[RMDB]
RNA sequence: GGGAACGACUCGAGUAGAGUCGAAAACCCAGCGACUCGAUAGUCAGAUUUGACUAUCGAGAAGGCGGGACUGGAUUCAGGGCAUCGAAUUCUCCAAGAUGCGAAAGAGAAAUCCCUGAAUCCAGUCCGGUCGAAGGAGGAAAGACCGAAACGCCAAAUCAUAAUAAUUAUUCGUAAUUAUUAUGAUAAAAGAAACAACAACAACAAC
Reactivity to DMS in 0.01 (KOAc 150mM, MgCl2 10mM, bicine 150mM(pH8.5), 24C), signal-to-noise 2, nucleotides 027 to 156: c020c000c010a230g010c110g030a200c000u000c000g000a030u000a010g020u010c000a090g020a300u010u010u020g010a050c000u000a000u000c000g030a010g010a030a120g000g000c000g010g000g000a030c000u020g000g000a020u000u010c010a010g010g060g030c180a180u000c060g000a190a130u000u000c010u040c040c040a230a250g020a080u000g020c030g010a060a130a180g010a270g000a100a060a200u000c010c000c000u020g010a010a030u010c000c000a010g030u000c000c000g030g000u000c000g000a040a070g000g030a090g010g000a160a200a300g000a040c010c000g020a060a110a080c020g000c010c010a040a190
Reactivity to 2A3 in 0.01 (KOAc 150mM, MgCl2 10mM, bicine 150mM(pH8.5), 24C), signal-to-noise 2, nucleotides 027 to 156: c000c000c000a010g110c040g170a050c010u000c010g000a010u000a000g010u010c000a010g070a300u300u280u220g000a000c000u000a000u010c000g000a000g000a000a040g000g000c020g000g000g010a000c000u010g000g010a000u000u000c000a000g000g000g010c010a030u010c010g040a070a070u120u050c000u000c010c010a040a020g010a040u040g020c030g080a100a180a020g090a020g010a000a040a030u100c000c000c000u000g000a000a000u000c000c000a000g000u000c000c000g000g000u010c000g030a160a060g010g020a010g000g030a120a060a040g000a010c020c020g030a240a170a010c010g000c000c000a070a130